[RMDB]
RNA sequence: GGGAACGACUCGAGUAGAGUCGAAAAACUGCUCAUGGUACAGGAUCCAUGUCUCUAGCAUCUAGGCUAGGAUCAGCGAUGAGAGCUCAGUACACUAGGAGCUAGCAUGCCAUGCUGCGACACAUGACGGUCUCGGUAGAUUCGUCUACCGAGACCGAAAAGAAACAACAACAACAAC
Reactivity to DMS in 0.01 (KOAc 150mM, MgCl2 10mM, bicine 150mM(pH8.5), 24C), signal-to-noise 2, nucleotides 027 to 126: a170c070u000g010c090u000c000a030u010g030g030u000a060c220a040g010g000a090u000c150c010a100u020g000u010c060u000c040u000a010g030c080a110u030c110u000a000g040g010c000u000a240g000g010a030u000c090a080g010c180g000a170u010g000a070g000a070g060c010u000c010a090g040u000a030c130a110c140u000a100g010g000a010g000c010u000a100g000c100a090u000g000c080c070a010u000g000c030u000g000c070g000a050c060a050c140a050u000g010a150